[RMDB]
RNA sequence: GGGAACGACUCGAGUAGAGUCGAAAAGUCUGUCUCUUUACCUCUUGCAACCAUGUGGCAUGUUAAGUAGACAUAAAUGGGCGACAAGUUAGCAUGAUCUUACAGAUAUGGCGUUUAGCUUUUGGCACGUAGCAACUGUUUUCGAACAGUUGCUACGAAAAGAAACAACAACAACAAC
Reactivity to DMS in 0.01 (KOAc 150mM, MgCl2 10mM, bicine 150mM(pH8.5), 24C), signal-to-noise 3, nucleotides 027 to 126: g010u010c040u010g010u000c030u010c020u000u000u000a090c090c030u000c040u000u000g040c040a090a090c080c060a100u000g020u010g010g030c070a050u000g010u000u010a040a080g010u020a100g010a060c080a070u010a030a080a070u010g020g020g010c070g020a040c100a050a110g020u010u000a070g020c050a040u000g000a050u000c030u000u010a090c110a090g020a080u000a070u000g010g020c050g030u000u000u000a080g010c060u010u000u000u000g020g000c130a170
Reactivity to 2A3 in 0.01 (KOAc 150mM, MgCl2 10mM, bicine 150mM(pH8.5), 24C), signal-to-noise 2, nucleotides 027 to 126: g050u010c030u070g020u000c020u000c000u080u070u040a080c000c050u060c030u070u050g010c010a030a030c050c030a080u120g060u130g070g000c050a060u040g040u050u030a090a020g030u060a020g070a010c020a080u150a020a200a030u130g030g000g050c060g020a040c040a070a060g030u050u020a010g030c020a040u130g030a090u090c030u110u060a040c030a040g050a040u050a050u090g050g000c090g040u060u040u080a050g010c000u050u030u080u020g100g000c090a030
The record gives the reactivity of an RNA of 177 nucleotides to DMS and 2A3. 2A3 adducts were read by reverse transcription with SuperScript II with manganese. For 2A3, 1,288 sequencing reads were counted.